[RMDB]
About this RNA:
Source: RMDB library OK3TST, as collected in RNAgym. An RNA of 207 nucleotides, treated with DMS and 2A3 and read out base by base. For DMS, 9,184 sequencing reads were counted. For 2A3 the reverse transcriptase was SuperScript II with manganese. The 2A3 profile rests on 10,993 reads. Conditions: 150 mM KOAc, 10 mM MgCl2 and 150 mM bicine (pH 8.5), 24 C.
RNA sequence: GGGAACGACUCGAGUAGAGUCGAAAACAAAGCGGAGUUCAACGGCUACAACCACCCCGAGCUCGCCCGCAAGUACGGCGUGACGGAGCGGUGGGUGCGGCAGCUCUGCGGCGAGGGGAAGCUGGAGGGACAGAUGAGCCUUCUCGACUACGGCGACUACACCAAUUAGAUUCGUCUAAUUGGUGUAAAAAGAAACAACAACAACAAC
Reactivity to DMS in 0.01 (KOAc 150mM, MgCl2 10mM, bicine 150mM(pH8.5), 24C), signal-to-noise 3, nucleotides 027 to 156: c080a080a180a140g010c010g000g010a090g050u010u020c020a050a050c060g020g010c010u000a080c020a090a070c020c020a060c010c000c010c010g010a140g000c030u000c000g000c010c000c040g000c050a140a200g020u020a120c080g010g020c020g030u010g000a250c030g020g000a050g020c040g010g000u000g010g010g010u000g020c000g010g020c050a080g020c010u000c010u020g020c040g020g020c170g030a120g010g030g000g010a050a100g020c030u020g010g010a130g000g010g020a100c040a120g000a090u000g020a110g020c000c020u000u000c050u000c050g010a080c040u000a050c030g000g030c070g000a140c040
Reactivity to 2A3 in 0.01 (KOAc 150mM, MgCl2 10mM, bicine 150mM(pH8.5), 24C), signal-to-noise 8, nucleotides 027 to 156: c020a000a060a000g030c010g010g020a030g020u130u160c120a150a090c100g130g000c010u070a040c030a060a020c010c000a010c000c020c000c000g010a070g020c000u010c010g000c010c040c010g090c120a090a050g130u190a080c060g000g010c010g010u030g030a040c030g020g030a070g080c120g010g030u040g010g010g010u020g010c040g030g000c010a010g000c010u010c010u030g000c010g000g000c010g010a030g010g000g000g010a060a010g020c050u040g030g020a070g020g030g020a020c030a030g080a080u130g020a040g010c000c000u110u050c050u050c040g100a090c050u090a030c060g040g000c020g040a020c040